[RMDB]
RNA sequence: GGGAACGACUCGAGUAGAGUCGAAAAACCCGUCGUCGAUUGAUCAAGUGGUAACUGAUUUUGAUGGCGUCACGUUCCACAUUUCAACUCCUGAGGAAAAGACGAAAAUCUUGAUCAGUCUGUCUAUGAAAUGCUAUCCUGAGCUUGUUAAUUACGAGUAUACGGGUGACUUCGGUCACCCGUAUACAAAAGAAACAACAACAACAAC
Reactivity to 2A3 in 0.01 (KOAc 150mM, MgCl2 10mM, bicine 150mM(pH8.5), 24C), signal-to-noise 1, nucleotides 027 to 156: a000c020c000c000g070u090c040g000u010c020g000a010u030u020g000a020u020c010a050a040g010u040g080g090u140a010a080c010u040g040a040u000u040u070u000g140a110u100g000g000c070g000u000c000a010c170g020u010u060c000c000a030c020a080u040u120u030c040a120a080c000u130c070c090u180g110a220g040g050a090a240a000a020g030a010c080g060a000a170a000a000u040c010u040u060g000a000u010c000a000g000u000c010u090g010u040c070u040a210u050g160a070a210a090u100g010c050u060a000u080c010c060u020g110a070g020c030u030u000g080u050u020a200a160u260u090a050c060g040a010

Overview
The data come from the RNA Mapping Database (RMDB), library OK3TST. This 207-nucleotide RNA was probed chemically with 2A3. For 2A3, 404 sequencing reads were counted. Conditions: 150 mM KOAc, 10 mM MgCl2 and 150 mM bicine (pH 8.5), 24 C. Values cover nucleotides 27 to 156.